[RMDB]
RNA sequence: GGGAACGACUCGAGUAGAGUCGAAAAUGGGGCUAACUAUGCGGCGUGGGCAGUAAACGUCGCGCAAGUCAUCGAUAGCAAAACAGCUGAUAAUUUGGAAAAGACAACUGCUGCUCUUUCGAUACUUCCAGGUAUCGGUAGCGUAAUGGGUAUUGCGAAAGCUGAUCAUGUUCGCAUGAUCAGCUUUAAAAGAAACAACAACAACAAC
Reactivity to 2A3 in 0.01 (KOAc 150mM, MgCl2 10mM, bicine 150mM(pH8.5), 24C), signal-to-noise 2, nucleotides 027 to 156: u130g010g000g010g030c020u060a080a010c030u030a080u250g000c010g000g000c000g020u060g010g020g050c030a020g040u140a030a140a000c000g000u020c020g030c030g010c010a020a020g030u030c010a020u040c050g160a100u100a090g000c030a000a060a030a150c060a060g020c000u020g030a030u080a230a090u060u090u100g050g020a020a080a020a000g060a000c040a030a000c080u020g000c020u010g000c000u000c000u020u060u050c010g000a000u010a010c000u260u070c060c060a010g000g110u010a030u010c020g000g020u030a010g020c030g020u040a040a040u030g010g020g020u080a030u010u140g040c070g000
Reactivity to DMS in 0.01 (KOAc 150mM, MgCl2 10mM, bicine 150mM(pH8.5), 24C), signal-to-noise 2, nucleotides 027 to 156: u010g010g000g030g030c050u030a110a090c080u000a060u000g030c030g020g030c000g050u000g010g010g050c080a170g000u000a100a150a040c030g010u000c030g000c030g070c050a030a040g010u000c100a030u000c020g030a090u010a080g000c040a050a050a080a140c040a140g010c030u010g000a100u000a040a090u000u010u030g010g020a080a090a100a190g010a180c030a020a060c040u000g020c030u010g000c030u010c070u000u000u000c000g000a020u000a020c010u010u000c140c160a170g000g020u000a010u000c010g040g000u010a020g030c040g000u000a050a070u010g010g000g010u000a060u000u010g010c030g010
Source information: The data come from the RNA Mapping Database (RMDB), library OK3TST. The record gives the reactivity of an RNA of 207 nucleotides to 2A3 and DMS. For DMS, 3,282 sequencing reads were counted. Values are in units of 0.01, from 0 to 300, in steps of 10. For DMS the reverse transcriptase was MarathonRT.